[RMDB]
RNA sequence: GGGAACGACUCGAGUAGAGUCGAAAAGAUAUGGAAAUCGUAUUGUUCGUUUGACGUCGGAAACGACCGAGAACUGUACGAGUUUCCUAAGUCAAAACCUUAGAAGAGCUUCGGCUCUUCUAAGGAACGUACUAUAGCCGUUCGCGGCUAUAGUACGAAAAGAAACAACAACAACAAC
Reactivity to 2A3 in 0.01 (KOAc 150mM, MgCl2 10mM, bicine 150mM(pH8.5), 24C), signal-to-noise 2, nucleotides 027 to 126: g000a030u120a010u150g030g000a000a000a000u040c000g020u000a010u020u110g030u000u000c070g040u040u160u280g080a070c030g000u000c000g000g060a030a080a090c030g010a010c000c000g040a030g020a030a000c010u010g000u030a000c020g000a000g040u010u010u030c010c000u010a180a020g040u000c000a000a030a180a250c000c000u000u000a000g000a010a000g000a010g000c030u110u170c300g200g000c020u010c010u000u000c010u010a000a000g010g000a020a020
Reactivity to DMS in 0.01 (KOAc 150mM, MgCl2 10mM, bicine 150mM(pH8.5), 24C), signal-to-noise 3, nucleotides 027 to 126: g010a040u010a300u000g000g010a000a020a050u000c000g010u000a010u010u000g000u000u000c000g020u000u000u020g010a200c300g000u010c010g010g000a090a090a210c000g010a010c000c010g000a110g010a000a000c000u000g010u000a010c010g000a040g000u010u000u000c000c020u000a040a060g010u000c040a080a050a080a110c010c000u000u000a000g010a020a000g020a020g000c000u000u010c250g000g010c000u000c000u000u000c000u010a000a010g000g010a030a020

An RNA of 177 nucleotides, treated with 2A3 and DMS and read out base by base.
Conditions: 150 mM KOAc, 10 mM MgCl2 and 150 mM bicine (pH 8.5), 24 C.
For DMS the reverse transcriptase was MarathonRT.
The 2A3 profile rests on 2,960 reads.